The data come from the RNA Mapping Database (RMDB), library M2RFPK. An RNA of 207 nucleotides, treated with 2A3 and DMS and read out base by base. DMS adducts were read by reverse transcription with MarathonRT. The 2A3 profile rests on 2,599 reads. Reactivities are given for positions 27 through 156. For 2A3 the reverse transcriptase was SuperScript II with manganese.
[RMDB]
RNA sequence: GGGAACGACUCGAGUAGAGUCGAAAAGAAAGAAAGAAACAAGCCGGCUCUGCUAGUUUCACGGCAACCACGUUGAAAUUACAACGAAAGAAGCUCGCACUCAACUUCAACGGCUUAACGAGUGCAAAAAAGAAGUAUCACUUCGGUGAUACUUCAACAUUGAUCUUUUCUUCGGAAAAGAUCAAUGAAAAGAAACAACAACAACAAC
Reactivity to 2A3 in 0.01 (KOAc 150mM, MgCl2 10mM, bicine 150mM(pH8.5), 24C), signal-to-noise 3, nucleotides 027 to 156: g050a030a110a020g040a030a150a000g050a030a170a030c030a080a000g040c040c020g040g000c010u030c020u070g000c010u020a010g070u010u050u040c100a050c030g040g000c020a050a090c010c000a020c030g010u020u020g060a090a160a100u230u120a100c000a030a000c020g040a030a030a150g020a030a010g030c100u210c240g000c010a000c000u000c000a020a090c010u040u020c040a100a050c040g030g000c000u050u040a030a000c040g000a000g000u000g000c000a020a010a020a000a020a070g010a000a000g000u000a000u000c010a000c010u020u050c180g040g000u000g000a000u000a000c000u000u000c000a000a000
Reactivity to DMS in 0.01 (KOAc 150mM, MgCl2 10mM, bicine 150mM(pH8.5), 24C), signal-to-noise 1, nucleotides 027 to 156: g010a170a080a100g020a080a060a140g000a280a100a100c020a050a220g000c000c010g030g050c010u000c030u000g010c060u010a060g010u000u000u040c050a140c090g030g030c040a080a100c060c030a120c000g010u000u000g000a120a080a110u000u000a130c080a050a160c050g050a190a130a150g010a050a070g000c030u000c070g020c010a090c030u000c000a030a300c090u000u000c020a060a230c080g000g070c000u000u020a070a090c300g010a010g000u000g000c070a000a000a060a070a150a040g030a000a000g010u000a010u000c000a000c000u000u010c300g030g030u010g000a010u000a010c000u000u000c010a040a080